[RMDB]
RNA sequence: GGGAACGACUCGAGUAGAGUCGAAAACUGUAACUUCUGGGAAGGCCUGGACCCUCUUUUAAAGGGCUCACCAGAUUAUGUCAAGCCCAUCCAGGCCACUGUUUUAACUUAAUGUCAUGUGAUUAAGGAGGGGCUUUAAUUAUAUCGGCAAAGUCUCUGUACAUAUGGAAUUCGUUCCAUAUGUACAAAAAGAAACAACAACAACAAC
Reactivity to 2A3 in 0.01 (KOAc 150mM, MgCl2 10mM, bicine 150mM(pH8.5), 24C), signal-to-noise 3, nucleotides 027 to 156: c040u050g070u190a080a050c040u080u100c080u240g020g020g030a170a030g020g000c020c000u010g000g010a010c000c060c010u050c050u050u270u070u200a110a160a030g020g000g000c010u010c030a070c050c040a080g040a240u170u180a090u110g040u050c020a030a010g000c020c010c000a010u000c010c000a010g000g030c010c000a000c000u010g000u000u090u040u050a050a030c020u040u100a090a020u110g020u040c010a020u050g030u020g050a020u050u050a010a010g040g010a020g000g050g010g010c000u030u040u020a000a010u030u010a020u000a010u070c050g000g040c000a030a050a240g010u080c070u050c050
Reactivity to DMS in 0.01 (KOAc 150mM, MgCl2 10mM, bicine 150mM(pH8.5), 24C), signal-to-noise 2, nucleotides 027 to 156: c050u000g030u000a100a080c070u010u010c020u010g020g000g030a160a170g030g020c010c000u000g000g030a080c010c000c010u010c020u010u000u000u000a060a150a080g050g040g000c010u000c050a130c050c000a130g000a090u000u010a080u010g010u000c110a100a170g000c000c010c010a220u000c000c010a080g000g030c020c230a060c060u010g000u000u000u000u000a060a120c010u000u000a040a060u000g030u000c020a080u000g050u000g000a040u000u000a050a090g030g020a140g020g000g010g070c000u000u000u000a010a050u000u000a080u010a020u020c060g000g000c010a060a050a070g010u000c060u000c060

The record gives the reactivity of an RNA of 207 nucleotides to 2A3 and DMS. It was measured as part of the RMDB library OK3TST. For 2A3 the reverse transcriptase was SuperScript II with manganese. Conditions: 150 mM KOAc, 10 mM MgCl2 and 150 mM bicine (pH 8.5), 24 C.